Overview:
This 177-nucleotide RNA was probed chemically with DMS and 2A3. Conditions: 150 mM KOAc, 10 mM MgCl2 and 150 mM bicine (pH 8.5), 24 C. The data come from the RNA Mapping Database (RMDB), library TTRDES. For 2A3, 34,285 sequencing reads were counted.

[RMDB]
RNA sequence: GGGAACGACUCGAGUAGAGUCGAAAAGAUAUGGACGAGAUGGUUUCGACAGCCGUCGGAAACGACGGACCCUGUGCCAUGUCGUCCUAAGUCAAAACCUGCCAGAGACCUUCGGGUCUCUGGCAGGGUUGUACUUAAGGUUCGCCUUAAGUACAACAAAAGAAACAACAACAACAAC
Reactivity to DMS in 0.01 (KOAc 150mM, MgCl2 10mM, bicine 150mM(pH8.5), 24C), signal-to-noise 8, nucleotides 027 to 126: g010a030u000a160u010g000g000a020c010g010a030g000a030u000g000g010u000u020u010c240g020a070c160a100g020c020c000g010u000c000g010g000a040a030a100c000g000a010c000g000g000a300c150c300c110u010g020u000g020c000c010a010u000g000u000c010g010u000c000c000u000a000a050g000u000c030a110a060a110a300c000c000u000g010c000c000a010g000a020g000a010c000c010u000u010c250g020g020g010u000c000u000c000u000g000g000c000a000g000g000
Reactivity to 2A3 in 0.01 (KOAc 150mM, MgCl2 10mM, bicine 150mM(pH8.5), 24C), signal-to-noise 9, nucleotides 027 to 126: g010a010u040a010u080g010g000a000c000g000a020g010a090u020g020g100u140u300u300c230g140a030c010a030g060c010c000g000u000c010g000g000a020a040a000c010g010a000c000g000g050a050c160c000c010u100g030u090g040c000c000a090u130g290u150c000g000u000c000c000u000a010a000g010u000c000a010a020a110a230c000c010u000g030c010c010a010g010a000g010a020c020c000u160u260c300g150g020g000u030c000u020c000u010g000g000c000a000g000g000
DMS adducts were read by reverse transcription with MarathonRT.